[RMDB]
RNA sequence: GGGAACGACUCGAGUAGAGUCGAAAAACACUCUUGUGGCCAGGUUAAUAGCCUCGGGUAUGGUAACAGUAGUAAGGAUAAAUGUGAAAAAUGGGUUAUCCGCAGCCAAAUCCUAAGGGGAAAAAGAAUUACAAAUCCGUAUUUUCAUCCUAUGGAUUCCUAAUAACAACUUCGGUUGUUAUUAGGAAAAAGAAACAACAACAACAAC
Reactivity to DMS in 0.01 (KOAc 150mM, MgCl2 10mM, bicine 150mM(pH8.5), 24C), signal-to-noise 1, nucleotides 027 to 156: a050c050a110c030u010c050u000u020g030u010g010g000c020c040a040g000g040u010u020a060a040u010a170g030c000c020u000c010g030g000g010u010a100u000g030g000u010a030a150c060a110g010u000a080g010u010a050a090g020g010a050u000a040a050a090u020g010u010g000a020a010a070a090a080u000g020g020g020u010u000a070u020c040c040g000c080a100g000c070c020a020a100a080u010c020c010u010a080a050g010g000g000g000a040a040a090a060a200g000a070a080u000u010a110c080a050a060a070u000c060c020g020u000a160u010u000u000u010c000a110u000c030c030u010a060u000g000g010a140u000
Reactivity to 2A3 in 0.01 (KOAc 150mM, MgCl2 10mM, bicine 150mM(pH8.5), 24C), signal-to-noise 2, nucleotides 027 to 156: a000c080a010c030u070c010u070u100g050u070g110g000c000c020a010g030g030u050u070a080a030u090a220g000c020c000u040c090g020g030g010u070a060u090g030g010u020a100a030c030a120g070u110a010g040u040a120a080g020g010a010u050a120a140a050u160g060u080g110a020a030a070a050a050u070g080g000g000u010u010a030u030c040c010g000c020a010g000c000c020a060a060a060u040c010c000u080a070a080g000g000g020g080a010a000a000a000a090g050a020a040u130u080a070c070a040a170a100u030c070c010g000u040a090u010u020u030u020c020a020u020c010c010u030a040u110g030g050a040u070

Conditions: 150 mM KOAc, 10 mM MgCl2 and 150 mM bicine (pH 8.5), 24 C. An RNA of 207 nucleotides, treated with DMS and 2A3 and read out base by base. The DMS profile rests on 2,291 reads. 2A3 adducts were read by reverse transcription with SuperScript II with manganese.